[RMDB]
An RNA of 177 nucleotides, treated with 2A3 and DMS and read out base by base. The DMS profile rests on 9,326 reads. The RNA was probed in 150 mM KOAc, 10 mM MgCl2 and 150 mM bicine (pH 8.5) at 24 C. It was measured as part of the RMDB library OK2TRN.

RNA sequence: GGGAACGACUCGAGUAGAGUCGAAAAUGCGGUAUUUCAAUCCUCUGGUGCUAGUCGUAGCUGCAAAGGCAAGGUCUCUUAAACUGGACUGAGUGCAUCAAGGUAGCAAAGUGAAGAGCCCCUGACCCUACCAAUACUACUUCGGUAGUAUUGGUAGAAAAGAAACAACAACAACAAC
Reactivity to 2A3 in 0.01 (KOAc 150mM, MgCl2 10mM, bicine 150mM(pH8.5), 24C), signal-to-noise 6, nucleotides 027 to 126: u110g000c040g000g040u080a140u040u130u120c060a050a050u050c010c000u000c090u050g030g010u030g030c020u020a030g070u070c050g100u100a050g000c040u050g010c070a120a080a070g050g000c030a050a030g030g000u010c030u000c000u080u130a110a110a080c070u060g010g010a010c010u050g030a030g130u070g010c010a020u040c040a050a030g050g000u020a020g020c050a080a070a050g040u090g050a060a060g020a050g050c010c010c000c020u030g050a060c020c000
Reactivity to DMS in 0.01 (KOAc 150mM, MgCl2 10mM, bicine 150mM(pH8.5), 24C), signal-to-noise 7, nucleotides 027 to 126: u000g020c090g020g020u010a070u000u000u000c090a110a120u010c010c010u010c130u010g020g010u000g000c030u010a070g020u000c100g020u010a100g010c040u000g020c120a040a110a140g010g010c040a100a150g010g000u000c020u010c080u000u010a040a070a100c170u000g010g000a050c030u000g000a160g010u010g010c040a040u000c050a060a080g010g010u000a090g010c070a040a060a100g010u010g000a060a060g010a140g010c050c020c020c020u000g000a120c100c080